[RMDB]
RNA sequence: GGGAACGACUCGAGUAGAGUCGAAAACACCCCCGGGUGUCCCCCCAGGAAUGGCGGGACCCCACUCGACAGGGUCCGCGUACCAUCCUUUCUUACCUGAUGGCCGGCAUGGUCCCAGCCUCCUCGCAUGCAAUAUCCUUCGGGAUAUUGAAAAGAAACAACAACAACAAC
Reactivity to DMS in 0.01 (KOAc 150mM, MgCl2 10mM, bicine 150mM(pH8.5), 24C), signal-to-noise 9, nucleotides 027 to 129: c060a220c040c010c000c080c090g070g040g000u040g020u000c000c000c010c010c020c030a040g020g030a090a060u020g000g000c150g010g000g000a020c000c020c010c020a060c100u040c160g030a130c200a190g010g000g030u000c010c010g040c050g030u010a070c020c020a050u000c030c030u020u030u020c070u020u040a140c080c050u010g010a130u030g000g000c030c020g000g000c060a000u060g020g020u000c020c020c010a110g040c000c000u000c020c020u010c010g040c080a080u040g030
Reactivity to 2A3 in 0.01 (KOAc 150mM, MgCl2 10mM, bicine 150mM(pH8.5), 24C), signal-to-noise 9, nucleotides 027 to 129: c030a040c000c010c000c020c060g060g000g000u040g040u030c010c010c000c000c000c010a000g030g050a170a140u070g020g020c000g010g000g000a010c010c000c000c000a050c040u170c050g120a070c050a100g030g000g010u030c010c000g150c030g040u050a110c010c000a030u020c020c000u060u160u080c050u090u100a130c040c020u050g040a070u080g070g010c020c010g020g030c040a080u120g020g010u020c000c000c000a020g020c000c000u000c000c000u010c010g050c030a020u140g020